Chemical mapping of a 177-nucleotide RNA with DMS and 2A3. For DMS the reverse transcriptase was MarathonRT.

RNA sequence: GGGAACGACUCGAGUAGAGUCGAAAAGCUAGCAGCAGUUCAGUGCGUUGGGAAAGUCACAUCCUGAGUCUAAGUGAUGAUCACUUAGUGAUCACAUGAACAUGACCAUGAACGUAGAAAGGACAUCAACACUGUGACCGUUCGCGGUCACAGUGUUAAAAGAAACAACAACAACAAC
Reactivity to DMS in 0.01 (KOAc 150mM, MgCl2 10mM, bicine 150mM(pH8.5), 24C), signal-to-noise 2, nucleotides 027 to 126: g030c060u000a090g000c060a020g030c030a110g020u000u030c040a050g020u000g000c070g020u010u010g030g010g020a080a110a060g010u000c080a080c120a110u000c010c000u000g040a140g000u000c020u000a070a170g010u000g000a080u000g020a030u010c000a000c000u010u000a120g030u000g000a000u020c000a010c000a020u000g010a160a140c190a060u000g000a050c030c040a140u010g010a060a050c100g000u000a080g000a130a040a080g010g000a100c030a100u000c100
Reactivity to 2A3 in 0.01 (KOAc 150mM, MgCl2 10mM, bicine 150mM(pH8.5), 24C), signal-to-noise 1, nucleotides 027 to 126: g000c020u020a020g040c000a020g070c010a000g000u110u080c020a030g050u010g060c080g030u030u100g050g000g030a030a170a040g090u110c020a010c020a090u000c000c100u030g050a040g020u000c030u010a140a100g010u010g130a300u020g010a030u100c000a000c020u160u120a050g000u000g000a000u010c000a000c000a060u050g020a030a020c020a160u140g000a020c030c000a060u090g000a150a030c020g000u060a030g160a010a070a050g060g010a000c000a040u060c050
The reactions ran in a buffer of 150 mM KOAc, 10 mM MgCl2 and 150 mM bicine (pH 8.5), at 24 C. The 2A3 profile rests on 897 reads. For DMS, 1,196 sequencing reads were counted.